Chemical mapping of a 207-nucleotide RNA with 2A3 and DMS.
The reactions ran in a buffer of 150 mM KOAc, 10 mM MgCl2 and 150 mM bicine (pH 8.5), at 24 C.
The 2A3 profile rests on 1,212 reads.
For DMS the reverse transcriptase was MarathonRT.
It was measured as part of the RMDB library OK3TST.
[RMDB]
RNA sequence: GGGAACGACUCGAGUAGAGUCGAAAACGUACGUGGAGACACGUACGACGUGACUUCGGUCACGAAUCGAGGCAACUCCUGCGCCUCGCGCGCGAGGCGUCGGUGGUCGGCGAGCCCACGGACGCAAAAACUCGCGCGCAUAUAACUAGCAGGAGAAUGAUUUAGGAGGAUUCGUCCUCCUAAAUCAAAAAGAAACAACAACAACAAC
Reactivity to 2A3 in 0.01 (KOAc 150mM, MgCl2 10mM, bicine 150mM(pH8.5), 24C), signal-to-noise 1, nucleotides 027 to 156: c020g010u000a000c000g000u000g010g020a050g020a050c000a000c000g000u000a000c000g000a020c000g000u000g000a000c000u030u050c290g090g000u020c000a000c020g000a010a120u130c100g000a000g000g000c000a120a230c080u010c000c000u000g000c010g010c020c020u020c100g000c000g010c000g000c000g000a060g030g000c020g000u000c070g110g000u020g000g020u020c010g060g180c170g040a040g000c000c000c020a000c040g050g000a000c010g010c040a070a150a040a070a070c000u000c000g000c000g000c000g000c010a010u000a000u010a050a070c150u070a000g010c000a000g000g000a010g000a010a020
Reactivity to DMS in 0.01 (KOAc 150mM, MgCl2 10mM, bicine 150mM(pH8.5), 24C), signal-to-noise 1, nucleotides 027 to 156: c050g010u020a030c050g000u000g030g000a300g000a300c000a000c020g020u000a000c020g000a090c020g020u010g000a000c050u000u000c230g040g060u000c000a010c020g000a080a040u020c130g000a050g000g010c060a160a090c050u000c000c020u000g020c010g000c080c030u000c050g040c050g040c020g000c000g000a000g100g010c000g020u000c020g000g110u000g070g040u000c030g000g000c130g010a300g050c130c000c020a010c010g000g080a020c000g000c090a020a100a020a090a240c050u000c020g020c000g000c000g020c020a050u020a000u000a130a050c100u000a080g040c020a060g030g000a000g050a030a070